RNA sequence: GGGAACGACUCGAGUAGAGUCGAAAAUACGGGUCCUCGUUAGUGAAAAUAUCCUUAAGGAAGUAAACGCAUCGGGAGCGAUAGCGGUGAAUUAUUCGUGGUUUUAUCGAUUCGGCAUAGUGGCGAUUCGGUAGUUAGACUUCGGUCUAACUACCGAAAAAGAAACAACAACAACAAC
Reactivity to 2A3 in 0.01 (KOAc 150mM, MgCl2 10mM, bicine 150mM(pH8.5), 24C), signal-to-noise 1, nucleotides 027 to 126: u050a000c000g040g000g010u090c000c070u160c060g010u000u020a000g040u040g230a010a110a080a080u060a030u000c000c000u010u010a050a050g050g080a030a030g000u090a000a000a160c090g000c060a020u000c010g130g000g010a000g120c010g000a010u110a010g150c030g000g020u020g030a020a000u260u000a070u060u010c000g010u080g000g090u080u040u000u000a070u130c120g020a060u140u090c000g000g000c000a040u060a150g090u120g030g000c060g050a000u000
Reactivity to DMS in 0.01 (KOAc 150mM, MgCl2 10mM, bicine 150mM(pH8.5), 24C), signal-to-noise 1, nucleotides 027 to 126: u000a140c030g000g000g000u000c040c030u010c070g000u040u010a100g000u000g010a040a160a110a260u010a040u000c000c010u000u030a130a150g000g000a150a040g000u000a090a080a120c040g000c040a060u020c090g040g040g020a110g040c050g010a040u000a020g000c000g090g000u000g000a120a170u040u000a070u030u000c050g000u030g030g010u000u030u030u060a070u000c030g000a180u000u020c000g020g000c120a160u050a000g100u020g030g070c000g000a090u010
Chemical mapping of a 177-nucleotide RNA with 2A3 and DMS.
For DMS the reverse transcriptase was MarathonRT.
High DMS reactivity at an A or C suggests that its Watson-Crick edge is free.